Chemical mapping of a 207-nucleotide RNA with 2A3. It was measured as part of the RMDB library M2RFPK. The RNA was probed in 150 mM KOAc, 10 mM MgCl2 and 150 mM bicine (pH 8.5) at 24 C. Reactivities are given for positions 27 through 156.

RNA sequence: GGGAACGACUCGAGUAGAGUCGAAAAGCAACUUAGGAUUUUAGGCUCCCCGUGCGUGUCUCGAACCAUGCCGGGCCAAACCCACGGGGGCUGGCGGUCCCCGUGCGGUCAAAAUCAAACCGCUAGAAAAACAGUUCUAGCUUCGGCUAGAACUGAAGACUAGUAGUGGGUUCGCCCACUACUAGUCAAAAGAAACAACAACAACAAC
Reactivity to 2A3 in 0.01 (KOAc 150mM, MgCl2 10mM, bicine 150mM(pH8.5), 24C), signal-to-noise 2, nucleotides 027 to 156: g010c030a030a090c100u180u220a140g090g010a190u130u110u020u250a090g060g000c030u130c030c020c020c060g080u180g040c030g000u070g030u020c080u020c240g070a060a050c010c010a020u040g000c000c000g030g010g000c020c000a050a050a020c000c000c000a000c000g010g000g000g000g000c000u000g020g000c000g000g020u000c000c000c000c000g000u000g020c060g000g040u030c000a000a020a000a180u070c020a030a130a080c000c000g000c030u020a020g120a000a070a020a000a000c000a000g010u000u020c010u010a000g000c000u030u040c150g070g000c010u000a000g000a000a000c000u000g000a050a010